An RNA of 177 nucleotides, treated with DMS and 2A3 and read out base by base. For 2A3, 2,344 sequencing reads were counted.
RNA sequence: GGGAACGACUCGAGUAGAGUCGAAAAAGAAUCUCCUUCGGGAGAUUCUGAACCACUAACCUGAUUGCGGAUGACGACGAGGCAGCUCGUGUCGAGCAACCACCGAGAACAGGUUCGCCUGUUCUAAUUUAUAUGGAACUUUCGAGUUCCAUAUAAAAAAAGAAACAACAACAACAAC
Reactivity to DMS in 0.01 (KOAc 150mM, MgCl2 10mM, bicine 150mM(pH8.5), 24C), signal-to-noise 6, nucleotides 027 to 126: a000g000a020a000u000c000u000c000c010u000u010c210g030g000g010a010g010a000u000u000c000u000g000a080a230c020c010a140c250u010a080a130c110c070u000g010a040u000u000g010c010g000g010a170u000g000a020c020g010a020c010g010a030g000g010c300a120g000c000u000c000g010u000g000u000c000g000a240g000c020a020a040c030c020a050c220c120g000a040g010a020a010c010a000g010g010u000u010c210g010c010c010u010g010u000u000c000u000a030a050
Reactivity to 2A3 in 0.01 (KOAc 150mM, MgCl2 10mM, bicine 150mM(pH8.5), 24C), signal-to-noise 2, nucleotides 027 to 126: a000g010a000a000u000c000u010c000c000u030u050c140g110g000g000a000g000a000u000u000c000u000g000a000a010c000c000a040c080u110a110a120c030c060u080g050a100u030u070g030c000g120g120a100u150g010a040c090g050a000c020g000a020g020g060c080a120g150c050u000c020g030u040g000u000c020g030a020g030c020a010a020c030c010a060c030c090g150a020g010a050a000c000a010g000g000u010u020c120g090c010c000u020g010u010u000c000u010a000a070
The DMS profile rests on 5,261 reads. Conditions: 150 mM KOAc, 10 mM MgCl2 and 150 mM bicine (pH 8.5), 24 C. The data come from the RNA Mapping Database (RMDB), library M2PK50. DMS adducts were read by reverse transcription with MarathonRT.